Annotation
Chemical mapping of a 177-nucleotide RNA with DMS and 2A3. 2A3 adducts were read by reverse transcription with SuperScript II with manganese. For DMS the reverse transcriptase was MarathonRT. DMS (dimethyl sulfate) methylates the pairing face of unpaired adenines and cytosines. Conditions: 150 mM KOAc, 10 mM MgCl2 and 150 mM bicine (pH 8.5), 24 C. Reactivities are given for positions 27 through 126. For DMS, 1,783 sequencing reads were counted.
RNA sequence: GGGAACGACUCGAGUAGAGUCGAAAAAGAAGCAGGUAGAAAGGAGGCGCACCUUACAAGAUUCCUCAUCCCUUCCUCCUUGAUGAGGUCCUUCUUUUGUGCCUGCUGACUCAGAAGGGGAAGGGAAUCUUUCAGUGACAUUCGUGUCACUGAAAGAAAAAGAAACAACAACAACAAC
Reactivity to DMS in 0.01 (KOAc 150mM, MgCl2 10mM, bicine 150mM(pH8.5), 24C), signal-to-noise 4, nucleotides 027 to 126: a060g000a300a060g000c000a010g010g030u000a100g010a020a010a010g020g000a020g010g010c300g010c300a060c000c000u010u000a020c010a030a020g010a270u030u010c100c090u010c160a110u000c000c020c000u010u010c010c010u000c020c030u010u010g000a110u000g010a000g020g010u000c010c010u000u000c000u010u010u000u010g020u020g000c020c020u010g010c010u000g000a060c080u020c070a150g010a120a090g020g000g020g010a030a030g000g000g010a050a050
Reactivity to 2A3 in 0.01 (KOAc 150mM, MgCl2 10mM, bicine 150mM(pH8.5), 24C), signal-to-noise 2, nucleotides 027 to 126: a030g110a010a000g030c010a000g090g000u300a190g200a050a030a000g020g010a000g000g000c070g050c130a020c000c000u000u020a000c000a040a000g000a080u110u120c020c040u140c110a140u050c010c000c020u020u000c010c000u100c010c020u070u060g090a300u050g000a090g000g030u050c000c000u010u030c020u010u020u020u070g150u030g010c000c000u020g000c000u000g000a000c010u020c040a090g070a170a080g000g000g000g000a000a000g020g010g000a000a030